[RMDB]
RNA sequence: GGGAACGACUCGAGUAGAGUCGAAAAUAGAGAUUAUCCAUUACGCUUAUCAAUAGCGCAGGCUCUGCCAGGCAACGCCGCGCCUGCAGCGUCAGUUCGGUAUGCAUCAGUUUAGCCCGCGCGGGCAAUCGACGAUUACUUUCGAGUAAUCGUCGAUAAAAGAAACAACAACAACAAC
Reactivity to 2A3 in 0.01 (KOAc 150mM, MgCl2 10mM, bicine 150mM(pH8.5), 24C), signal-to-noise 4, nucleotides 027 to 126: u180a010g110a000g040a060u090u080a060u140c020c010a030u100u110a080c060g010c030u100u150a130u290c110a130a200u090a140g050c020g000c050a070g000g020c010u000c030u070g050c080c030a030g050g030c010a020a050c050g040c030c000g030c020g040c020c000u040g000c000a050g020c000g080u040c010a040g040u080u070c040g020g000u010a010u090g020c030a100u020c010a060g030u000u090u130a050g000c000c020c000g060c070g000c110g030g010g000c020a000
Reactivity to DMS in 0.01 (KOAc 150mM, MgCl2 10mM, bicine 150mM(pH8.5), 24C), signal-to-noise 2, nucleotides 027 to 126: u000a090g000a130g000a070u000u000a040u020c070c050a110u030u050a100c000g010c020u020u020a300u010c130a060a110u040a070g010c030g000c120a130g000g000c000u020c010u020g000c040c040a090g000g050c030a160a060c140g000c050c010g000c070g000c070c010u030g000c060a040g030c160g000u000c000a090g010u020u010c080g000g020u000a020u010g000c050a000u000c000a070g000u040u000u000a150g010c000c020c060g010c050g000c100g000g000g010c040a090